Annotation
The record gives the reactivity of an RNA of 207 nucleotides to 2A3. It was measured as part of the RMDB library RNAMAK. The reactions ran in a buffer of 150 mM KOAc, 10 mM MgCl2 and 150 mM bicine (pH 8.5), at 24 C.

[RMDB]
RNA sequence: GGGAACGACUCGAGUAGAGUCGAAAAUCAAAAGCUUCGGCUUUUGAAAAAAAGAUAUGGAUGAGGAAGCGAGCGAUAAGCCUGACUCGGAAACGAGUCAAGGCUUUUGACGCUCGCCCUCAUCCUAAGUCAAAAAAUCGUAGUUUCGACUACGAAAUCUUUACCUAGGUUUCGACCUAGGUAAAGAAAAAGAAACAACAACAACAAC
Reactivity to 2A3 in 0.01 (KOAc 150mM, MgCl2 10mM, bicine 150mM(pH8.5), 24C), signal-to-noise 1, nucleotides 027 to 156: u000c000a000a000a000a010g000c010u120u190c300g160g020c000u070u100u020u010g020a120a020a000a000a000a000a020g050a030u020a020u090g010g000a000u000g000a000g020g000a270a120g070c000g000a000g010c040g130a110u030a270a000g030c000c000u000g010a000c000u000c000g000g020a070a080a000c010g000a000g010u000c010a000a050g010g010c000u000u000u020u030g010a000c140g000c000u000c000g000c000c000c000u020c000a000u000c000c000u000a000a000g010u010c000a000a000a010a040a200a040u100c020g000u010a030g010u060u060u230c300g070a010c010u000a000c010g000a000a000a190